[RMDB]
RNA sequence: GGGAACGACUCGAGUAGAGUCGAAAAUCAAGCGGUCGCGGUCGACAGGUACUCCGAUGUAUGAGGAGGCGGUGAACGAUAUUACCACCAUCACCAAAUGGGUGGAGGCUGCACGCUCUAACACUUUUAUUAGCGAUAACGACGCUGGCAACAUCGCGGUAGACUCUCAAUUCGUUGAGAGUCUACCAAAAGAAACAACAACAACAAC
Reactivity to 2A3 in 0.01 (KOAc 150mM, MgCl2 10mM, bicine 150mM(pH8.5), 24C), signal-to-noise 2, nucleotides 027 to 156: u180c010a030a030g010c020g130g060u160c030g070c020g000g000u000c020g100a020c020a030g000g130u070a190c010u000c030c010g120a130u150g130u270a200u120g050a060g040g010a030g000g020c010g030g030u120g050a100a040c040g010a060u010a110u170u140a050c020c000a000c000c000a050u210c000a040c100c000a030a090a180u190g100g010g030u000g000g070a050g000g000c010u010g000c020a020c020g070c020u140c000u050a090a020c070a000c070u050u140u000u110a220u050u220a030g040c000g000a000u030a140a060c100g110a020c030g080c100u020g020g000c000a010a060c030a120u060c010g000c000